Record summary:
An RNA of 177 nucleotides, treated with 2A3 and DMS and read out base by base. For DMS, 1,018 sequencing reads were counted. The reactions ran in a buffer of 150 mM KOAc, 10 mM MgCl2 and 150 mM bicine (pH 8.5), at 24 C. 2A3 is a SHAPE reagent: it acylates the 2'-hydroxyl of flexible nucleotides of all four kinds. Reactivities are rounded to 0.1 and cut off at 0 and 3. It was measured as part of the RMDB library OK2TRN. The 2A3 profile rests on 1,103 reads.
RNA sequence: GGGAACGACUCGAGUAGAGUCGAAAAUUGAUCACACCUAAUCAGGCCGAUCCCCGACGGAUCAACACCGGCGGUAAUAUGACGCUUUGCAGUUGUAAAUUUCCCCCGGAAAUACGCUGAAGCAAACCAUCACGAAGACUUUCGAGUCUUCGUGAUGAAAAGAAACAACAACAACAAC
Reactivity to 2A3 in 0.01 (KOAc 150mM, MgCl2 10mM, bicine 150mM(pH8.5), 24C), signal-to-noise 1, nucleotides 027 to 126: u010u050g010a000u020c060a000c000a000c100c000u100a150a140u110c070a010g030g080c000c030g000a010u030c000c040c000c000g040a030c020g040g000a010u080c000a030a080c050a010c020c010g030g060c050g010g000u010a060a000u080a080u150g050a020c020g000c070u060u070u190g050c100a070g020u180u140g050u110a110a120a080u020u000u080c010c000c020c020c000g060g000a060a000a000u130a020c030g010c070u010g000a030a010g020c050a000a040a050c030
Reactivity to DMS in 0.01 (KOAc 150mM, MgCl2 10mM, bicine 150mM(pH8.5), 24C), signal-to-noise 2, nucleotides 027 to 126: u000u000g000a110u000c000a080c110a070c100c040u000a040a070u010c110a020g000g040c040c050g000a060u020c030c140c010c030g010a120c060g000g000a020u010c090a050a110c250a110c010c000g020g010c250g000g000u030a020a070u020a040u000g000a030c050g000c010u000u010u000g020c020a060g050u000u000g000u000a010a070a150u010u000u000c040c010c080c010c070g010g000a040a040a070u010a060c080g000c010u010g020a030a040g000c080a060a050a080c110